[RMDB]
RNA sequence: GGGAACGACUCGAGUAGAGUCGAAAACUUGGACGACGCGAGCAGCGGCGCGUCCACGGGCAAGAAGGCGGCGGCGGCGGCGGCGUCGAAGGCGCUGCAGCGCGUGGGCAGCGGCGCCAGCGCGGUGCGGCAGAUAACAUUUCGAUGUUAUCUGCCGAAAAGAAACAACAACAACAAC
Reactivity to 2A3 in 0.01 (KOAc 150mM, MgCl2 10mM, bicine 150mM(pH8.5), 24C), signal-to-noise 2, nucleotides 027 to 126: c020u050u160g070g070a020c100g040a070c020g110c050g040a080g000c020a000g020c020g150g050c000g010c010g010u020c000c000a030c010g090g040g010c050a100a060g160a110a070g300g000c010g020g000c020g000g010c010g000g000c030g050g040c080g080g040c030g040u050c000g060a040a030g160g000c020g000c000u070g000c020a000g020c130g000c010g020u030g000g040g000c070a160g000c010g030g070c000g000c000c000a000g000c000g000c000g010g040u060g030
Reactivity to DMS in 0.01 (KOAc 150mM, MgCl2 10mM, bicine 150mM(pH8.5), 24C), signal-to-noise 2, nucleotides 027 to 126: c030u000u000g000g020a120c050g000a070c010g000c010g010a120g000c030a050g030c010g020g000c020g010c010g010u000c000c010a030c070g000g000g040c040a160a140g000a100a110g020g000c010g010g030c000g000g030c000g010g010c010g000g010c140g000g020c030g000u010c030g000a040a070g020g020c030g000c000u010g010c040a060g010c000g010c050g030u000g000g010g010c010a080g020c020g010g020c010g000c000c020a080g000c000g010c040g020g000u020g020
About this RNA: This 177-nucleotide RNA was probed chemically with 2A3 and DMS. For DMS, 2,554 sequencing reads were counted. For DMS the reverse transcriptase was MarathonRT. High 2A3 reactivity points to a flexible backbone, as in loops and unpaired stretches.